[RMDB]
RNA sequence: GGGAACGACUCGAGUAGAGUCGAAAAAUAGUGGUGGGUGCCUGUAGUCCCAGCUACUUGGGAGGCUGAAGCAGGAGAAUGGUGUGAACCCGGGAGGCAGAGCUGGCAGUGAGCUGAGAUCGCGCCAGCACAUAGACGCGUUCGCGCGUCUAUGUGCAAAAGAAACAACAACAACAAC
Reactivity to DMS in 0.01 (KOAc 150mM, MgCl2 10mM, bicine 150mM(pH8.5), 24C), signal-to-noise 3, nucleotides 027 to 126: a080u010a130g000u000g010g020u020g010g000g030u000g010c020c020u000g000u000a090g010u010c010c010c010a060g010c100u000a050c130u010u010g020g000g030a080g020g020c100u000g010a060a110g010c040a060g010g000a080g010a140a080u000g010g010u010g020u000g010a060a090c020c030c030g000g010g000a110g000g020c090a080g030a090g000c010u010g010g000c030a110g020u010g010a040g010c080u010g000a130g000a070u000c020g020c060g010c010c010a040
Reactivity to 2A3 in 0.01 (KOAc 150mM, MgCl2 10mM, bicine 150mM(pH8.5), 24C), signal-to-noise 1, nucleotides 027 to 126: a000u160a000g070u050g060g030u100g100g000g040u040g020c040c000u010g060u040a030g040u010c030c000c070a000g050c040u150a070c030u110u080g010g000g000a040g140g030c080u050g050a090a040g060c010a020g010g020a050g020a070a080u110g010g030u120g030u030g120a030a110c050c040c010g020g000g030a090g010g030c070a020g000a010g080c020u030g000g000c000a050g070u020g050a050g020c040u070g030a060g010a170u070c020g000c000g020c050c000a050
The data come from the RNA Mapping Database (RMDB), library OK2TRN. Structure probing data (DMS and 2A3) for a 177-nucleotide construct.